[RMDB]
Annotation:
Chemical mapping of a 170-nucleotide RNA with DMS and 2A3. The data come from the RNA Mapping Database (RMDB), library 15KLIB. For DMS the reverse transcriptase was MarathonRT. For DMS, 4,356 sequencing reads were counted.

RNA sequence: GGGAACGACUCGAGUAGAGUCGAAAAGCUACUCUUCUUUCUCUUUCGUCGUCAUCCCUGGCCAGCCUCCGGAGUUCCUCUUCUUCCUCUCGGCUGAGGUUCUUCCCCCCUCCGGCCAGUUGCUUCUAACCUUCCCCCUUCGGGGGGAAGAAAAGAAACAACAACAACAAC
Reactivity to DMS in 0.01 (KOAc 150mM, MgCl2 10mM, bicine 150mM(pH8.5), 24C), signal-to-noise 1, nucleotides 027 to 129: g000c080u020a070c050u000c020u020u010c060u030u070u060c010u050c100u000u020u020c100g030u010c160g080u000c040a000u000c000c090c030u040g030g030c040c000a000g040c110c000u010c070c010g020g040a000g020u000u040c010c040u000c020u060u000c030u060u020c040c040u000c000u060c000g000g090c050u000g050a100g080g000u000u090c110u000u030c000c010c000c000c000c000u000c030c120g010g010c010c010a100g030u040u040g040c040u090u000c020u080a000a250c300
Reactivity to 2A3 in 0.01 (KOAc 150mM, MgCl2 10mM, bicine 150mM(pH8.5), 24C), signal-to-noise 2, nucleotides 027 to 129: g030c050u080a080c010u030c050u050u000c000u050u100u010c050u030c000u080u050u070c070g010u000c000g060u000c030a090u040c020c000c000u040g010g000c030c000a020g000c030c020u070c020c000g000g060a070g000u040u040c000c000u010c000u080u020c010u050u000c030c040u060c030u000c000g040g000c040u060g020a030g000g040u070u000c010u030u000c050c010c000c020c000c000u000c000c040g050g000c000c020a010g000u000u010g010c010u000u000c000u020a040a050c000